Chemical mapping of a 207-nucleotide RNA with 2A3. The RNA was probed in 150 mM KOAc, 10 mM MgCl2 and 150 mM bicine (pH 8.5) at 24 C.
[RMDB]
RNA sequence: GGGAACGACUCGAGUAGAGUCGAAAAGAAAGAAAGAAAGAAAGUUAUGAAGUCCUAUUCACGCGCGAUAGGAUAAACUUCAUAGCGAUCGUGUAUGUGCUAACGCACAUACACGAAUGCGCAUGCAGAACUGCAUGCAUGAACAUAGCGCGUGCAAAGUAGUGGCAUGAUUCGUCAUGCCACUACUAAAAGAAACAACAACAACAAC
Reactivity to 2A3 in 0.01 (KOAc 150mM, MgCl2 10mM, bicine 150mM(pH8.5), 24C), signal-to-noise 2, nucleotides 027 to 156: g080a050a050a010g110a100a130a000g100a060a090a000g070a010a130a040g000u030u000a000u000g010a000a010g000u020c000c000u020a030u010u020c160a000c020g010c000g000c000g000a000u000a010g000g000a030u080a040a170a000c000u000u000c000a000u000a000g000c000g000a020u010c000g000u000g000u040a000u000g020u020g000c050u130a110a050c140g000c000a000c000a000u000a020c000a000c000g000a000a010u020g000c030g000c020a000u020g000c000a030g050a300a080c250u070g000c000a020u000g000c010a020u130g040a040a020c080a080u120a070g000c000g000c010g000u010g010c090a300a010